[RMDB]
RNA sequence: GGGAACGACUCGAGUAGAGUCGAAAAGCAUGUGCACAACAGAAACCCUGGGAUAAGUGACAUGGUGGUCUUGUUUCUUACUGAGUUUUCUUUGUUCUCUAACUGCACUGUCCCCAUUUCUCCUACCUUCAGGGUCUCAGCUCUGCCUGAGCACCUCGCAGUGAUUAUAUUUCGAUAUAAUCACUGCAAAAGAAACAACAACAACAAC
Reactivity to 2A3 in 0.01 (KOAc 150mM, MgCl2 10mM, bicine 150mM(pH8.5), 24C), signal-to-noise 9, nucleotides 027 to 156: g040c020a040u130g020u070g070c020a020c020a120a090c030a080g060a060a070a040c030c020c020u050g040g000g020a090u070a110a040g020u020g040a020c030a060u060g020g090u080g040g020u080c020u050u040g030u010u060u020c020u050u050a080c050u050g040a030g120u050u050u070u080c040u070u120u080g050u110u030c050u000c010u070a100a090c040u040g020c020a010c040u040g040u100c010c010c000c000a030u060u090u050c050u020c010c020u050a110c020c000u060u150c050a040g010g010g030u000c010u010c000a010g000c010u100c080u300g050c020c000u010g000a010g000c030a050c000c020u080c070
Reactivity to DMS in 0.01 (KOAc 150mM, MgCl2 10mM, bicine 150mM(pH8.5), 24C), signal-to-noise 3, nucleotides 027 to 156: g050c040a080u000g020u010g020c050a080c050a120a150c060a100g010a070a060a100c030c010c010u030g020g000g010a110u010a040a070g010u000g000a120c070a140u000g010g020u000g010g020u000c050u000u000g010u000u000u000c020u000u000a110c060u010g010a100g010u000u000u000u000c020u000u000u000g010u000u000c040u000c050u010a080a120c060u010g000c000a040c030u000g020u010c000c000c030c030a240u010u000u010c040u000c040c020u000a080c050c020u010u000c070a100g010g010g000u010c020u000c030a050g020c010u010c130u000g070c090c020u000g000a070g010c030a060c010c030u010c100